[RMDB]
Chemical mapping of a 177-nucleotide RNA with DMS and 2A3. For DMS the reverse transcriptase was MarathonRT. The reactions ran in a buffer of 150 mM KOAc, 10 mM MgCl2 and 150 mM bicine (pH 8.5), at 24 C.
RNA sequence: GGGAACGACUCGAGUAGAGUCGAAAAUCUGUUUACAAGUUAUCGUUAAGUCCAUGUCUGAAUACGAUUCCGUAAACAGAAGCCAGUUUGCGUCAAUUCCGACAUGGACUCUUGGCAGAACUGAUCAAUCCUCAUACGGUUUCGACCGUAUGAGGAUAAAAGAAACAACAACAACAAC
Reactivity to DMS in 0.01 (KOAc 150mM, MgCl2 10mM, bicine 150mM(pH8.5), 24C), signal-to-noise 3, nucleotides 027 to 126: u000c030u000g030u020u010u010a120c040a090a040g010u010u000a060u010c170g010u000u010a090a020g010u000c010c000a030u000g020u020c000u000g000a020a020u000a100c130g010a110u000u000c230c040g000u000a010a020a020c020a120g010a080a070g010c160c060a070g010u010u000u000g020c010g000u000c070a110a030u010u000c010c090g000a010c030a020u000g000g000a000c030u000c020u010u000g000g010c060a050g010a040a070c060u000g010a120u010c160a080
Reactivity to 2A3 in 0.01 (KOAc 150mM, MgCl2 10mM, bicine 150mM(pH8.5), 24C), signal-to-noise 1, nucleotides 027 to 126: u000c000u000g010u020u080u100a060c030a050a060g010u070u100a290u260c130g060u090u210a060a020g000u000c010c010a000u000g000u000c000u020g020a030a000u070a100c070g040a040u200u080c070c020g000u020a020a040a000c040a030g090a140a000g060c000c000a020g010u000u000u020g020c000g000u030c020a000a010u000u000c010c020g000a020c000a000u000g010g000a020c010u000c000u000u020g000g020c020a020g000a050a050c050u070g040a030u080c060a050